[RMDB]
RNA sequence: GGGAACGACUCGAGUAGAGUCGAAAAGAUAUGGAGCUCUCUGGAACGACUAUUUAAUCGGAAACGAUUAAACGAAUCGUUUAGAGUGAGGCUCCUAAGUCAAAACAUCAAACUUCGGUUUGAUGAACGUAAUAACGUUGUUCGCAACGUUAUUACGAAAAGAAACAACAACAACAAC
Reactivity to 2A3 in 0.01 (KOAc 150mM, MgCl2 10mM, bicine 150mM(pH8.5), 24C), signal-to-noise 4, nucleotides 027 to 126: g030a010u070a050u160g010g010a000g010c020u030c010u000c020u250g070g050a020a000c000g030a020c050u040a020u030u020u010a010a000u010c000g010g040a070a060a050c010g000a010u020u000a010a000a010c050g100a100a300u010c000g010u000u000u030a070g040a020g040u130g160a120g060g000c000u000c000c000u000a120a010g040u010c030a010a030a070a150c000a010u010c000a000a010a000c000u030u080c300g120g000u020u010u020g010a000u000g020a070a020
Reactivity to DMS in 0.01 (KOAc 150mM, MgCl2 10mM, bicine 150mM(pH8.5), 24C), signal-to-noise 5, nucleotides 027 to 126: g010a040u000a300u000g010g010a020g010c010u010c010u000c010u000g030g060a000a000c000g000a010c070u000a250u000u000u000a000a000u000c000g000g000a130a090a180c000g010a010u000u000a000a000a010c060g010a040a060u000c000g030u000u000u000a020g000a040g020u010g020a100g000g010c010u000c000c000u000a010a090g010u000c030a090a060a130a200c000a000u000c010a000a000a010c000u000u010c180g010g010u000u000u000g000a000u000g000a050a110
This 177-nucleotide RNA was probed chemically with 2A3 and DMS.